[RMDB]
An RNA of 207 nucleotides, treated with DMS and 2A3 and read out base by base. Values cover nucleotides 27 to 156. The reactions ran in a buffer of 150 mM KOAc, 10 mM MgCl2 and 150 mM bicine (pH 8.5), at 24 C. For DMS the reverse transcriptase was MarathonRT. Values are in units of 0.01, from 0 to 300, in steps of 10.
RNA sequence: GGGAACGACUCGAGUAGAGUCGAAAAACAUAGUAUCUGCAGAGCAACAUCUUUUCUUCAUCUCUUUGUUGGCAGAUCUAAGGUCCAUAGGCCGUAGAGACAUUGACGGUAGAAUUUUGACACCUAUGGUUAACAAAGAAAAUCCAAGGUACUUGUCCGCGAUCUAUAAAUUCGUUUAUAGAUCGCGAAAAGAAACAACAACAACAAC
Reactivity to DMS in 0.01 (KOAc 150mM, MgCl2 10mM, bicine 150mM(pH8.5), 24C), signal-to-noise 2, nucleotides 027 to 156: a060c020a160u010a070g000u000a060u000c000u000g030c030a150g010a130g030c050a120a100c090a120u010c040u010u010u010u010c020u000u010c090a140u020c040u000c010u000u010u000g000u030u000g000g000c030a070g000a050u010c060u000a070a060g020g010u000c010c040a080u000a050g030g020c030c030g050u010a090g000a150g010a050c070a130u010u000g020a080c080g050g020u020a110g020a110a170u000u000u020u000g040a230c130a060c030c000u010a000u000g000g010u000u000a050a180c060a060a060a180g000a090a050a060a090u000c040c030a020a130g010g020u000a080c010u000u000g010u000c030
Reactivity to 2A3 in 0.01 (KOAc 150mM, MgCl2 10mM, bicine 150mM(pH8.5), 24C), signal-to-noise 4, nucleotides 027 to 156: a000c040a060u100a020g080u100a030u030c000u010g000c040a030g010a040g280c030a050a040c030a090u110c050u120u180u120u040c070u180u160c070a180u070c060u060c040u140u110u070g020u000u010g030g000c010a010g000a030u000c010u040a060a060g050g000u000c010c010a030u020a020g040g000c010c010g020u020a040g030a000g020a180c050a160u090u200g030a010c020g020g030u050a040g120a110a090u210u230u100u170g040a060c020a010c030c000u020a060u040g010g000u020u050a030a030c030a040a130a030g020a040a070a010a010u040c050c010a000a030g050g010u080a060c010u070u080g050u050c050